[RMDB]
RNA sequence: GGGAACGACUCGAGUAGAGUCGAAAAGAUAUGGAGUGGACAGGACAUGAAGGAGUAUCGGAAACGAUACACACUUCAACAGCCUGCCACUCCUAAGUCAAAACACUGAAUCUUCGGAUUCAGUGAACCUAGCGUAAAGGUUCGCCUUUACGCUAGGAAAAGAAACAACAACAACAAC
Reactivity to DMS in 0.01 (KOAc 150mM, MgCl2 10mM, bicine 150mM(pH8.5), 24C), signal-to-noise 4, nucleotides 027 to 126: g000a010u000a080u020g000g000a030g030u000g000g000a170c010a030g030g000a010c160a210u010g010a010a010g000g000a080g000u000a000u000c000g020g000a030a000a030c000g040a010u000a000c010a040c190a160c000u000u000c000a140a120c260a150g010c010c000u010g000c010c000a000c000u000c000c010u000a000a040g000u000c000a100a090a100a220c020a000c010u000g020a010a000u000c000u000u010c290g020g000a010u000u000c000a020g000u000g000a050a090
Reactivity to 2A3 in 0.01 (KOAc 150mM, MgCl2 10mM, bicine 150mM(pH8.5), 24C), signal-to-noise 5, nucleotides 027 to 126: g010a000u000a010u060g000g020a010g000u020g020g030a210c000a010g000g010a010c150a300u300g000a020a000g020g010a030g000u010a010u000c010g010g020a010a010a000c010g000a000u010a000c010a010c010a020c020u010u010c020a110a070c080a040g000c000c010u010g000c000c000a010c020u000c000c000u010a000a000g000u000c000a010a010a110a110c010a000c010u000g000a010a000u010c010u050u130c300g200g000a000u000u010c000a000g000u000g000a010a010